RNA sequence: GGGAACGACUCGAGUAGAGUCGAAAACAUCCACUGCUACGGCAGUGGAUGAACGAGGUAGGUACGCCUACCUCGAAAGGGGGAUGUGCUCAUAUACAUUAAACGUCCAUGGUACGCCAUGGACGAACGUACCAGGGCUAUUCGUAGCCCUGGUACGAAAAGAAACAACAACAACAAC
Reactivity to DMS in 0.01 (KOAc 150mM, MgCl2 10mM, bicine 150mM(pH8.5), 24C), signal-to-noise 2, nucleotides 027 to 126: c000a000u000c000c000a020c020u000g000c010u010a140c230g010g000c000a000g040u000g000g000a010u000g010a010a130c030g020a000g000g020u000a000g000g000u000a060c300g000c000c000u010a000c000c000u000c000g000a000a050a140g000g000g030g000g000a120u000g010u000g000c150u000c170a080u000a120u000a070c100a130u000u020a030a080a170c050g000u010c000c000a000u000g000g000u000a100c260g000c040c000a000u000g000g000a000c010g010a000a070
Reactivity to 2A3 in 0.01 (KOAc 150mM, MgCl2 10mM, bicine 150mM(pH8.5), 24C), signal-to-noise 2, nucleotides 027 to 126: c000a000u010c010c000a020c000u010g000c000u010a080c210g150g000c010a010g000u010g000g000a000u000g000a010a000c010g000a000g000g000u010a010g000g030u040a030c240g100c020c000u000a000c000c010u000c000g010a070a000a010g030g020g000g000g010a010u040g050u030g100c030u050c060a090u090a010u050a140c070a050u120u210a070a180a050c040g000u000c010c000a000u000g000g000u040a030c280g050c020c000a000u000g010g020a000c000g020a000a000